[RMDB]
RNA sequence: GGGAACGACUCGAGUAGAGUCGAAAACGAAUGUUCGCAUUCGAAAAAACCUUUGUGCCACUUGAAGUUAGGGAGCCUAGUGGUCCCAUUGGGACCAUACUAGGCGAAGAACUAAUGGAGGAGUGGCACUCUGGUAAAAAAGCGGUUUCGACCGCAACGGUAGGGUAAAGUUCGCUUUACCCUACCGAAAAGAAACAACAACAACAAC
Reactivity to 2A3 in 0.01 (KOAc 150mM, MgCl2 10mM, bicine 150mM(pH8.5), 24C), signal-to-noise 1, nucleotides 027 to 156: c000g000a000a010u030g010u130u140c300g020c150a020u010u010c020g060a240a020a010a030a020a010c010c000u020u000u000g010u020g000c020c000a010c000u010u070g020a080a020g000u000u030a020g000g010g010a010g000c000c000u000a010g020u000g000g000u000c000c000c010a290u160u300g000g020g000a000c050c000a000u020a040c000u000a000g000g000c000g000a000a000g010a000a000c000u000a000a010u050g060g050a090g140g060a000g000u000g000g000c000a000c000u000c000u000g000g000u050a030a020a020a020a020a020g000c040g000g010u090u130u130c170g090a020c010c020g000c010a010a020